This 177-nucleotide RNA was probed chemically with 2A3 and DMS.

RNA sequence: GGGAACGACUCGAGUAGAGUCGAAAAUGGGGGUGCCGAAGACCAUCGACAACGACAUCAUGUACAUCGACAAGUCGUUCGGGUUCGAGACCGCGGUGGCGCUCGCGGCCCAGGCGGUCUCGGCGGCGUGCGUCUCGAAAUUCGUUUCGAGACGCACAAAAGAAACAACAACAACAAC
Reactivity to 2A3 in 0.01 (KOAc 150mM, MgCl2 10mM, bicine 150mM(pH8.5), 24C), signal-to-noise 2, nucleotides 027 to 126: u110g020g010g000g000g000u060g000c040c020g010a040a000g030a070c030c010a010u130c040g040a020c040a090a000c030g060a020c010a050u160c020a020u220g050u170a040c030a150u050c040g030a000c040a130a080g010u000c010g020u000u010c040g080g000g020u110u070c010g010a000g000a000c000c010g000c020g020g170u110g010g000c200g000c050u070c090g090c050g110g030c010c010c010a060g020g020c000g000g000u020c000u010c000g010g000c020g000g000c080
Reactivity to DMS in 0.01 (KOAc 150mM, MgCl2 10mM, bicine 150mM(pH8.5), 24C), signal-to-noise 2, nucleotides 027 to 126: u010g000g000g000g020g050u020g000c010c030g000a140a070g010a080c060c020a120u000c100g010a060c120a080a100c040g000a040c060a150u000c070a080u000g000u000a070c180a110u000c060g020a050c150a070a110g000u000c010g000u000u030c030g000g020g000u000u000c000g000a000g010a020c010c010g060c010g020g030u010g000g040c100g020c050u020c220g000c140g010g000c000c000c040a080g000g020c000g000g000u000c000u000c000g020g000c010g000g010c090
Conditions: 150 mM KOAc, 10 mM MgCl2 and 150 mM bicine (pH 8.5), 24 C. For 2A3 the reverse transcriptase was SuperScript II with manganese. Source: RMDB library OK2TST, as collected in RNAgym.